[RMDB]
RNA sequence: GGGAACGACUCGAGUAGAGUCGAAAACAAGUCCCGAGUUCAUUAAUAGUGAGAGCCAAGAACCAUACUCAUAAUUUGCCCGGCAACAUAACCGUAGUUCUCGGAGUCAAUGGUUACAUAUGGUUAACGUAGCAUGAGGGUUCGCCCUCAUGCUACGAAAAGAAACAACAACAACAAC
Reactivity to DMS in 0.01 (KOAc 150mM, MgCl2 10mM, bicine 150mM(pH8.5), 24C), signal-to-noise 2, nucleotides 027 to 126: c250a170a200g000u000c010c000c000g020a200g000u000u000c030a050u000u000a060a090u010a140g000u000g000a070g000a050g000c050c070a060a060g000a060a040c020c010a040u000a080c040u000c100a020u010a060a030u020u000u020g010c060c030c000g050g000c130a050a050c080a110u000a070a070c080c090g030u000a020g020u010u000c030u000c070g010g000a060g010u000c060a060a000u000g000g020u000u000a020c140a050u010a040u000g000g010u020u000a050a180
Reactivity to 2A3 in 0.01 (KOAc 150mM, MgCl2 10mM, bicine 150mM(pH8.5), 24C), signal-to-noise 1, nucleotides 027 to 126: c010a000a090g060u000c000c040c000g030a060g070u050u050c090a130u070u130a130a150u090a180g030u010g060a060g000a030g080c030c040a050a010g020a030a010c000c000a040u120a190c030u010c040a110u080a300a110u020u070u100g010c030c010c000g060g000c000a140a070c040a150u200a080a020c010c050g030u050a040g000u000u040c020u040c070g060g010a020g010u040c020a030a030u030g000g000u020u000a120c050a050u230a100u080g000g050u080u110a070a010